[RMDB]
An RNA of 177 nucleotides, treated with DMS and 2A3 and read out base by base. The reactions ran in a buffer of 150 mM KOAc, 10 mM MgCl2 and 150 mM bicine (pH 8.5), at 24 C. For 2A3 the reverse transcriptase was SuperScript II with manganese. For DMS, 1,722 sequencing reads were counted.

RNA sequence: GGGAACGACUCGAGUAGAGUCGAAAAUCAAUCAUGUUCGCAUGAUUGAAAAGGUCAGGUGACCUAACCACGACACGCGUCGAAGCGACCGAGCCCGGAGGCAAAGUGCAAUCUUCGGAUUGCACAAGCAUAGUAUCGACUUCGGUCGAUACUAUGCAAAAGAAACAACAACAACAAC
Reactivity to DMS in 0.01 (KOAc 150mM, MgCl2 10mM, bicine 150mM(pH8.5), 24C), signal-to-noise 2, nucleotides 027 to 126: u000c000a000a010u010c000a010u000g000u000u000c220g020c000a020u000g000a010u000u020g000a020a030a080a050g020g000u000c000a140g010g000u000g000a040c050c030u000a070a100c050c030a140c060g000a020c060a130c170g000c170g000u000c050g020a120a100g000c110g000a080c020c010g010a090g020c000c010c020g000g010a100g010g010c170a070a040a080g060u000g000c000a000a010u000c000u000u000c180g000g000a010u000u000g010c000a000c000a000a080
Reactivity to 2A3 in 0.01 (KOAc 150mM, MgCl2 10mM, bicine 150mM(pH8.5), 24C), signal-to-noise 3, nucleotides 027 to 126: u010c010a000a000u010c010a020u020g040u050u080c140g000c100a000u010g010a000u010u000g000a030a000a000a040g020g000u010c030a030g060g290u100g210a050c030c000u010a060a050c010c020a040c070g010a040c010a020c080g140c070g030u070c050g050a100a030g070c050g050a020c000c000g020a010g050c020c030c050g010g050a060g030g000c060a010a070a070g000u020g000c000a000a010u010c000u020u100c220g070g010a000u010u020g010c010a010c000a000a000